RNA sequence: GGGAACGACUCGAGUAGAGUCGAAAAGAUUCUGUGGCUCAGGAAUUUAGACAGGACACAGUGGGGAAUCUUGUCUCUGCGCCCCACAAUGUCAGUUGGGCUGGAACAGGCAGUAUGACUUCUUCACAUAUGCAUCUGGUUCUGUGACCAGGCACUGGUCAGGACGUACAUUCGUGUACGUCCUGACAAAAGAAACAACAACAACAAC
Reactivity to 2A3 in 0.01 (KOAc 150mM, MgCl2 10mM, bicine 150mM(pH8.5), 24C), signal-to-noise 3, nucleotides 027 to 156: g050a030u110u000c010u010g020u020g060g040c020u020c040a020g020g070a020a050u110u110u070a160g010a070c070a030g080g030a010c020a000c040a100g050u070g000g030g000g000a050a040u050c040u080u070g070u020c040u000c010u060g030c020g030c030c000c000c000a020c000a010a140u070g020u050c040a040g040u080u030g050g030g000c020u020g030g030a050a030c030a030g020g000c000a000g030u130a080u160g030a110c000u060u010c000u120u120c090a060c010a140u190a050u170g010c000a050u020c030u010g020g010u080u050c040u120g120u120g040a050c010c000a000g000g030c000a010c060u050g010
Reactivity to DMS in 0.01 (KOAc 150mM, MgCl2 10mM, bicine 150mM(pH8.5), 24C), signal-to-noise 2, nucleotides 027 to 156: g000a090u000u010c020u040g020u000g020g030c050u020c010a210g000g000a080a080u000u000u010a110g020a190c070a190g010g000a040c100a020c030a220g000u000g090g060g030g010a090a130u000c030u000u000g010u000c020u000c030u000g020c130g010c050c000c010c010a060c020a040a060u010g020u000c110a100g010u000u000g030g000g090c060u020g010g060a080a090c030a060g030g030c050a080g030u010a050u000g000a060c120u000u000c040u000u000c040a160c020a110u010a050u000g020c080a090u010c020u000g020g000u000u000c050u020g010u000g020a080c020c000a210g000g000c010a040c030u010g000
Conditions: 150 mM KOAc, 10 mM MgCl2 and 150 mM bicine (pH 8.5), 24 C.
An RNA of 207 nucleotides, treated with 2A3 and DMS and read out base by base.
For DMS the reverse transcriptase was MarathonRT.